[RMDB]
Source information: Structure probing data (2A3 and DMS) for a 207-nucleotide construct.
RNA sequence: GGGAACGACUCGAGUAGAGUCGAAAAAGAACAUGGAGAGUAGAAAGAGGUCCUAGCAGAGCAGCUCAUCAUGCCACUUUAUACUGAGUCUUUUGAUAGCACUGAAUUGCAAAGCUACACAUUUUGUGACCUACCAUCAGACAACUGAAUCUAACCAGUUACAGAGCAUUUUCGAAUGCUCUGUAACAAAAGAAACAACAACAACAAC
Reactivity to 2A3 in 0.01 (KOAc 150mM, MgCl2 10mM, bicine 150mM(pH8.5), 24C), signal-to-noise 4, nucleotides 027 to 156: a010g010a020a010c010a010u040g020g010a020g000a010g030u110a060g030a080a120a030g040a020g000g000u010c020c040u060a010g000c040a020g020a010g060c030a010g000c010u010c030a060u050c010a020u070g020c040c000a070c000u050u110u100a150u050a060c060u070g030a010g040u000c000u010u080u050u040g050a050u070a020g010c030a010c050u030g040a080a080u070u040g000c040a070a070a040g000c010u090a020c040a010c020a090u030u090u160u080g020u050g010a010c000c000u020a050c020c010a020u040c010a000g050a070c010a070a020c040u080g040a060a040u020c030u040a050a050c050c000a040
Reactivity to DMS in 0.01 (KOAc 150mM, MgCl2 10mM, bicine 150mM(pH8.5), 24C), signal-to-noise 1, nucleotides 027 to 156: a080g020a080a080c080a080u000g020g000a050g010a030g010u000a110g030a100a130a050g010a150g010g020u010c060c040u000a110g020c020a140g020a240g030c020a100g010c040u000c040a040u000c000a050u000g000c030c010a130c040u030u000u000a040u020a110c070u000g000a200g030u000c000u000u010u010u000g020a100u000a030g030c010a070c040u000g010a040a010u000u000g020c020a050a050a120g000c040u000a000c020a030c080a050u030u000u000u020g050u000g000a090c120c000u000a040c030c020a040u000c030a050g000a030c030a060a160c050u000g030a050a110u000c040u000a080a140c060c020a150
For 2A3 the reverse transcriptase was SuperScript II with manganese. The 2A3 profile rests on 2,509 reads. The reactions ran in a buffer of 150 mM KOAc, 10 mM MgCl2 and 150 mM bicine (pH 8.5), at 24 C. The data come from the RNA Mapping Database (RMDB), library OK3TST.